[RMDB]
RNA sequence: GGGAACGACUCGAGUAGAGUCGAAAAAACGCGCGCCGUGCGGCUAGCUCUUCCUCAGUGAGGACUGGCAGCGGUAAAUACCAGCCGAAUGUUUGUCCGAAUGUCUGUCCGAACUGCAGCGCAACACCGCCAAACACCAACAUUGCUGGAUAAAACGGCAACGAUUACUAUUCGUAGUAAUCGUUGCAAAAGAAACAACAACAACAAC
Reactivity to DMS in 0.01 (KOAc 150mM, MgCl2 10mM, bicine 150mM(pH8.5), 24C), signal-to-noise 1, nucleotides 027 to 156: a020a070c080g040c070g020c070g030c050c030g030u000g010c020g050g020c050u000a170g020c040u010c010u000u000c000c070u020c110a090g010u070g020a300g010g000a070c010u000g000g010c030a160g010c020g020g000u000a080a030a030u000a130c040c000a180g010c060c040g020a040a120u010g050u010u000u000g000u050c000c020g000a130a020u000g030u010c010u020g000u000c020c020g020a190a020c050u010g000c110a030g020c110g080c060a110a080c060a030c020c000g060c000c070a080a070a000c020a060c020c040a040a110c090a090u010u010g000c020u000g010g000a220u000a110a030a060a160c130g000
Reactivity to 2A3 in 0.01 (KOAc 150mM, MgCl2 10mM, bicine 150mM(pH8.5), 24C), signal-to-noise 3, nucleotides 027 to 156: a000a000c070g050c010g010c030g020c050c050g060u110g040c070g020g010c050u040a020g000c020u010c020u070u030c020c010u050c030a030g000u020g070a040g010g010a020c010u020g010g000c000a010g030c030g000g010u070a040a060a010u120a040c040c010a030g110c050c060g140a140a070u100g080u020u020u060g110u090c000c000g010a220a130u030g010u030c030u030g000u000c010c000g020a020a010c000u030g000c070a020g000c000g020c050a060a040c020a030c060c010g030c030c020a050a100a070c060a030c060c030a020a050c020a140u100u160g020c020u050g000g050a110u240a150a090a030a020c080g160